Source: RMDB library OK1LIB, as collected in RNAgym.
Structure probing data (DMS and 2A3) for a 177-nucleotide construct.
For 2A3 the reverse transcriptase was SuperScript II with manganese.
The RNA was probed in 150 mM KOAc, 10 mM MgCl2 and 150 mM bicine (pH 8.5) at 24 C.
RNA sequence: GGGAACGACUCGAGUAGAGUCGAAAAAAUUUCAGCGCAUAUAUGCCCCUCUACGUUCAAGUUUAGUACACAGAUGUUGAUAUGUAUGGGUUUUAAUUUUAGUGGCGGUGAUUUGGUGCGUAGCUGGCCCUAAGAAUUCCUUCGGGAAUUCUUAGGGAAAAGAAACAACAACAACAAC
Reactivity to DMS in 0.01 (KOAc 150mM, MgCl2 10mM, bicine 150mM(pH8.5), 24C), signal-to-noise 2, nucleotides 027 to 126: a070a050u010u020u000c010a060g000c040g030c050a050u030a040u010a050u020g000c000c030c030c030u020c010u030a040c090g000u030u000c020a020a060g020u010u020u040a110g020u010a070c100a100c140a070g000a070u010g000u020u000g000a050u040a040u020g000u000a060u030g000g010g030u020u020u030u020a010a060u050u020u040u020a040g010u000g010g020c070g000g030u000g020a030u000u010u000g000g010u000g020c030g020u000a050g010c040u000g000g000
Reactivity to 2A3 in 0.01 (KOAc 150mM, MgCl2 10mM, bicine 150mM(pH8.5), 24C), signal-to-noise 4, nucleotides 027 to 126: a000a020u140u100u060c100a070g000c000g000c070a020u060a010u030a030u200g020c000c000c000c010u020c000u020a030c010g030u020u040c020a020a020g010u010u080u150a140g020u180a120c140a040c080a100g130a130u140g080u220u030g050a130u110a060u230g040u020a090u080g010g030g000u000u060u050u150a070a110u010u090u070u140a120g010u060g090g040c040g010g020u080g040a080u030u010u130g040g010u040g010c020g020u040a040g020c010u040g060g030